[RMDB]
RNA sequence: GGGAACGACUCGAGUAGAGUCGAAAAAAUUUGGUUAUGGCGAAGGUCGUGUUUCACGAACGCUAUGGAAUGGAAAAAGACGUGUGUUUAAGACUACGUUAGACAAAUAUCUGAGUCUAUCAGAAGCCCUACUACCAGACUUCGGUCUGGUAGUAGGAAAAGAAACAACAACAACAAC
Reactivity to 2A3 in 0.01 (KOAc 150mM, MgCl2 10mM, bicine 150mM(pH8.5), 24C), signal-to-noise 3, nucleotides 027 to 126: a000a000u230u080u060g090g020u100u040a040u110g020g020c000g030a130a020g160g020u020c000g000u090g070u020u200u290c060a040c030g040a070a000c000g040c000u020a030u020g090g060a100a080u080g050g110a070a050a070a000a000g060a020c060g000u070g050u020g020u110u130u140a040a030g050a050c040u030a000c030g010u010u000a070g000a050c050a000a120a040u170a080u030c020u020g000a000g160u000c030u110a130u030c030a010g070a070a050g020c000
Reactivity to DMS in 0.01 (KOAc 150mM, MgCl2 10mM, bicine 150mM(pH8.5), 24C), signal-to-noise 2, nucleotides 027 to 126: a070a050u000u030u000g000g020u050u000a020u000g000g000c060g010a110a040g010g020u010c000g030u000g020u070u010u000c050a030c050g000a080a090c010g000c030u010a010u020g000g000a090a130u030g000g010a050a070a070a220a030g000a060c070g000u010g000u010g000u030u030u030a030a030g000a110c030u020a120c020g020u010u000a060g000a020c170a000a030a100u030a090u030c080u010g010a170g010u020c120u010a130u030c050a030g020a080a070g010c140
An RNA of 177 nucleotides, treated with 2A3 and DMS and read out base by base. Conditions: 150 mM KOAc, 10 mM MgCl2 and 150 mM bicine (pH 8.5), 24 C. For DMS the reverse transcriptase was MarathonRT.